[RMDB]
RNA sequence: GGGAACGACUCGAGUAGAGUCGAAAAUGCAAUCCGAGGCCGAGAUUAUAAUUGGCGGUGAAAUGAAGUUCUCGUUGCAUAUCGUUCUUUGCUUCAGGAAUAAGGAGGUACCGCGCCCAUGACAGACCAGUAGGCGUCAGUUCGCUGACGCCUACUGAAAAGAAACAACAACAACAAC
Reactivity to 2A3 in 0.01 (KOAc 150mM, MgCl2 10mM, bicine 150mM(pH8.5), 24C), signal-to-noise 1, nucleotides 027 to 126: u040g000c000a010a020u120c000c000g020a080g080g000c000c010g060a050g000a060u120u040a140u160a160a180u110u100g000g000c050g060g000u110g120a100a000a020u170g070a110a000g090u070u000c030u010c030g020u000u000g000c000a000u050a030u100c090g120u120u000c000u040u050u080g040c000u000u010c020a010g000g070a090a040u100a010a150g110g000a070g110g050u050a010c000c030g060c000g000c030c000c000a050u030g000a020c020a050g090a070c010
Reactivity to DMS in 0.01 (KOAc 150mM, MgCl2 10mM, bicine 150mM(pH8.5), 24C), signal-to-noise 1, nucleotides 027 to 126: u030g030c000a060a050u000c050c050g000a110g000g010c000c000g030a020g000a080u000u000a080u060a040a050u000u010g010g000c000g000g000u030g000a140a010a100u070g000a080a060g000u060u000c000u020c000g020u000u000g060c020a050u000a040u030c080g000u010u000c010u000u030u000g000c000u000u040c190a110g010g010a050a040u000a120a120g070g040a080g030g000u010a060c050c030g040c030g010c060c000c000a000u000g000a120c130a160g000a160c070